[RMDB]
RNA sequence: GGGAACGACUCGAGUAGAGUCGAAAACAAAAAAUAAUCCACCCUUGAGUUAGUGGCUCAGGUGGAUUAUUCGUCCAAUCGGCCGAUCCCUUGCAGGGAUCCGAGCUAUUGUUUGACUGAAGGUGUGCUUGAUCGCUCAAUUCGUUGAGCGAUCAAGAAAAGAAACAACAACAACAAC
Reactivity to DMS in 0.01 (KOAc 150mM, MgCl2 10mM, bicine 150mM(pH8.5), 24C), signal-to-noise 1, nucleotides 027 to 126: c010a020a000a090a090a060a010u000a000a050u000c000c000a000c000c050c210u000u030g000a020g020u000u000a100g080u010g060g010c010u010c000a070g030g020u000g040g020a000u000u000a010u000u000c210g040u030c010c000a070a000u030c160g000g000c000c010g010a020u000c000c000c000u000u040g020c280a190g000g000g000a000u000c050c000g000a150g020c000u000a040u000u000g000u000u060u040g030a060c000u010g040a090a140g000g050u000g000u000g000
Reactivity to 2A3 in 0.01 (KOAc 150mM, MgCl2 10mM, bicine 150mM(pH8.5), 24C), signal-to-noise 2, nucleotides 027 to 126: c030a000a040a140a030a000a000u040a000a000u050c000c000a000c000c010c020u020u120g000a020g000u130u190a060g010u100g300g010c000u000c020a010g000g010u000g040g000a000u000u010a000u010u000c000g000u000c000c010a040a010u100c030g050g000c000c000g020a000u000c010c020c030u080u180g220c150a080g000g000g050a000u000c000c000g040a040g000c050u010a000u020u110g090u080u080u080g020a030c080u070g110a030a060g110g000u230g010u040g030
About this RNA
This 177-nucleotide RNA was probed chemically with DMS and 2A3. DMS adducts were read by reverse transcription with MarathonRT. It was measured as part of the RMDB library RFM100.